[RMDB]
RNA sequence: GGGAACGACUCGAGUAGAGUCGAAAAUCGGGCGCAUUGGGUUUGGGGGAUAGUGAUUGAAUUGAGGGUUUUGCCGAUGCUAUCGGGGAUUUGAAAGCAUUCCAAACUCGGGCGUACCCUCGAUUUAGUAUAUUAAUAAUUUCGAUUAUUAAUAUACAAAAGAAACAACAACAACAAC
Reactivity to 2A3 in 0.01 (KOAc 150mM, MgCl2 10mM, bicine 150mM(pH8.5), 24C), signal-to-noise 1, nucleotides 027 to 126: u100c040g000g030g090c070g000c060a090u040u030g000g030g050u180u080u080g060g000g000g020g000a040u050a040g080u070g090a160u120u070g000a010a020u000u010g000a000g030g000g000u000u000u100u140g000c010c010g010a010u110g050c100u070a030u140c020g020g000g020g000a010u030u020u070g070a040a000a000g010c000a000u000u000c010c020a010a040a000c040u000c000g060g010g000c000g000u000a000c000c000c000u000c000g010a000u000u000u000a030
Reactivity to DMS in 0.01 (KOAc 150mM, MgCl2 10mM, bicine 150mM(pH8.5), 24C), signal-to-noise 1, nucleotides 027 to 126: u020c100g000g000g000c100g040c100a040u030u050g020g000g020u040u010u030g000g000g000g000g010a050u050a060g000u000g000a100u030u020g010a080a020u000u000g010a020g010g010g000u000u010u000u020g010c010c020g010a030u010g020c110u000a080u000c110g020g040g040g000a040u000u000u010g020a140a090a120g050c080a010u000u010c010c060a030a150a100c060u000c070g010g000g010c020g050u000a020c010c000c010u000c010g000a040u000u000u000a140
Annotation
Structure probing data (2A3 and DMS) for a 177-nucleotide construct. The RNA was probed in 150 mM KOAc, 10 mM MgCl2 and 150 mM bicine (pH 8.5) at 24 C. It was measured as part of the RMDB library OK1LIB. For DMS the reverse transcriptase was MarathonRT. For 2A3 the reverse transcriptase was SuperScript II with manganese.